[RMDB]
RNA sequence: GGGAACGACUCGAGUAGAGUCGAAAAGAUAUGGAAUUCCGCGAGCAGAUGCGAGCAUAUUUCCCUAAUUCGGAAACGAAUUAGAUCAAUAUGAACUACUCGCCCUGCUCGCGGAAUUCCUAAGUCACAGAACGCUAUAGUUCGCUAUAGCGUUCUGAAAAGAAACAACAACAACAAC
Reactivity to DMS in 0.01 (KOAc 150mM, MgCl2 10mM, bicine 150mM(pH8.5), 24C), signal-to-noise 2, nucleotides 027 to 126: g010a030u000a300u000g010g000a020a010u000u000c000c000g010c010g020a060g020c010a030g010a090u000g050c020g020a020g000c000a020u000a000u000u000u000c240c160c000u000a010a000u000u000c000g020g020a150a130a250c010g010a000a000u000u000a000g000a080u030c190a010a010u010a010u000g010a090a020c090u010a300c010u000c010g000c000c190c000u000g000c000u000c010g010c000g010g000a000a000u000u000c000c000u000a010a050g010u000c070a250
Structure probing data (DMS) for a 177-nucleotide construct.
The reactions ran in a buffer of 150 mM KOAc, 10 mM MgCl2 and 150 mM bicine (pH 8.5), at 24 C.
Values cover nucleotides 27 to 126.
DMS adducts were read by reverse transcription with MarathonRT.